[RMDB]
RNA sequence: GGGAACGACUCGAGUAGAGUCGAAAAGAUAUGGACGAUAUCUUGUGUACUCAUCCGAGGCGCGAAACCUGAGGUCGGAAACGACCUUCAGGGAGCCUGAUGAGUACACAAGAUAUCGUCCUAAGUCCAACUCUAUUCGCUUCGGCGAAUAGAGUUGAAAAGAAACAACAACAACAAC
Reactivity to DMS in 0.01 (KOAc 150mM, MgCl2 10mM, bicine 150mM(pH8.5), 24C), signal-to-noise 1, nucleotides 027 to 126: g000a070u010a300u010g010g000a010c010g030a040u000a010u000c010u010u000g010u010g020u020a000c000u010c030a020u010c030c300g000a050g000g090c000g000c300g020a130a110a300c000c000u010g010a030g000g020u010c010g010g030a110a150a270c000g000a000c000c000u000u010c020a000g010g000g000a080g000c000c020u010g010a010u000g010a010g000u000a000c000a010c000a000a000g000a010u000a000u000c010g010u010c000c000u030a000a060g000u000c020
Chemical mapping of a 177-nucleotide RNA with DMS. Values cover nucleotides 27 to 126. Values are in units of 0.01, from 0 to 300, in steps of 10. Source: RMDB library TTRINS, as collected in RNAgym. The RNA was probed in 150 mM KOAc, 10 mM MgCl2 and 150 mM bicine (pH 8.5) at 24 C.